RNA sequence: GGGAACGACUCGAGUAGAGUCGAAAAAAAAGAGCGAGCCUCCCGAUACGAGUUUGCCAGGACCUAUCAAGUUUGGAGUCAUCCGGGCCCUAAGGUAGAAUAGAACCCCGGGGGGUGAUCCACCAGGUGAUCAGAUGCUUCGGCAUCUGAAAAAGAAACAACAACAACAAC
Reactivity to DMS in 0.01 (KOAc 150mM, MgCl2 10mM, bicine 150mM(pH8.5), 24C), signal-to-noise 3, nucleotides 027 to 129: a090a010a120a060g030a050g040c060g020a000g030c060c000u000c010c020c000g030a150u040a070c140g000a110g000u000u000u030g030c000c000a100g040g000a060c040c020u010a050u030c150a100a090g000u030u040u050g010g010a000g020u040c160a170u030c030c060g060g010g030c000c010c010u020a100a030g010g020u010a110g000a070a140u030a120g010a050a070c090c090c050c010g000g020g040g000g050g030u020g000a000u020c060c030a120c000c000a120g000g000u060g010a100
Reactivity to 2A3 in 0.01 (KOAc 150mM, MgCl2 10mM, bicine 150mM(pH8.5), 24C), signal-to-noise 2, nucleotides 027 to 129: a000a010a000a030g040a000g030c030g020a000g000c000c000u000c000c000c000g030a000u040a070c070g010a080g170u010u020u020g030c000c010a010g010g000a020c020c000u030a040u140c060a060a130g080u070u150u090g110g010a060g000u090c020a040u000c010c010g020g020g010c000c000c000u080a080a040g020g000u020a030g070a110a020u110a070g060a060a050c000c030c010c010g000g000g000g000g000g000u030g020a020u020c000c000a010c060c000a020g010g110u080g040a000